The record gives the reactivity of an RNA of 177 nucleotides to DMS. For DMS the reverse transcriptase was MarathonRT. The reactions ran in a buffer of 150 mM KOAc, 10 mM MgCl2 and 150 mM bicine (pH 8.5), at 24 C. Values cover nucleotides 27 to 126.
[RMDB]
RNA sequence: GGGAACGACUCGAGUAGAGUCGAAAAGAUAUGGACCAGGUGUAGGCCAUAUCCAUGGAACUACACUGCUCCUUCGGAAACGAAGGACAGUGCCAUGGAUAUGGCCGCAGAUACCUGGUCCUAAGUCCACUACUUUGAACUUCGGUUCAAAGUAGUGAAAAGAAACAACAACAACAAC
Reactivity to DMS in 0.01 (KOAc 150mM, MgCl2 10mM, bicine 150mM(pH8.5), 24C), signal-to-noise 2, nucleotides 027 to 126: g010a120u000a300u000g000g000a020c000c000a010g000g010u000g050u000a150g020g020c000c000a040u000a010u000c000c000a010u000g020g000a060a040c120u010a300c010a000c020u000g000c280u000c000c000u000u000c020g020g010a090a140a290c000g000a020a000g020g000a020c000a000g000u000g010c010c000a000u000g000g020a000u000a000u000g000g000c010c000g000c080a040g010a070u000a010c000c000u000g000g000u000c000c000u000a000a110g020u000c020